[RMDB]
Source information
Chemical mapping of a 207-nucleotide RNA with 2A3 and DMS. For 2A3, 1,983 sequencing reads were counted. 2A3 adducts were read by reverse transcription with SuperScript II with manganese. It was measured as part of the RMDB library M2RFPK. The reactions ran in a buffer of 150 mM KOAc, 10 mM MgCl2 and 150 mM bicine (pH 8.5), at 24 C.

RNA sequence: GGGAACGACUCGAGUAGAGUCGAAAAAGAAUUGUACCACCACUGCGUAUCCUAAACGGGCUCUGCAGUGGUUAUUCUUGUAAAGUACUAGGAGUGAAUAGUGGCCCGUAGUGCAGGCAUUAACAUUAAAAGGCAAUCCACUUCGGUGGAUUGCCAACAUAUUGCUCAUGUUCGCAUGAGCAAUAUGAAAAGAAACAACAACAACAAC
Reactivity to 2A3 in 0.01 (KOAc 150mM, MgCl2 10mM, bicine 150mM(pH8.5), 24C), signal-to-noise 4, nucleotides 027 to 156: a000g050a030a060u100u080g060u100a050c060c000a000c000c010a000c040u010g000c010g030u070a090u110c000c010u080a140a140a090c090g000g000g000c050u020c070u170g000c000a000g000u010g010g000u000u020a000u010u000c000u010u020g070u070a070a120a140g030u020a050c050u030a020g030g020a030g060u070g070a100a130u070a140g060u060g050g040c020c000c000g030u010a010g000u020g020c030a010g040g000c030a040u090u130a100a040c020a040u140u240a070a180a070a020g000g000c000a000a000u000c000c000a010c000u060u090c300g010g000u000g000g000a000u000u000g010c000c000a000a000
Reactivity to DMS in 0.01 (KOAc 150mM, MgCl2 10mM, bicine 150mM(pH8.5), 24C), signal-to-noise 3, nucleotides 027 to 156: a040g010a050a070u000u000g010u010a110c080c100a130c000c000a000c000u000g000c010g020u000a100u000c020c020u000a010a120a140c150g020g020g030c040u000c090u000g020c020a030g020u000g000g010u000u000a000u000u010c020u000u020g020u000a080a100a130g010u000a050c040u010a060g030g000a150g010u010g010a090a130u000a070g010u010g010g030c000c020c010g000u010a060g020u000g040c040a070g010g020c030a060u000u010a040a090c060a100u000u000a030a070a110a150g030g000c000a030a010u010c000c000a020c000u000u010c220g080g030u000g000g000a020u000u010g020c000c010a000a030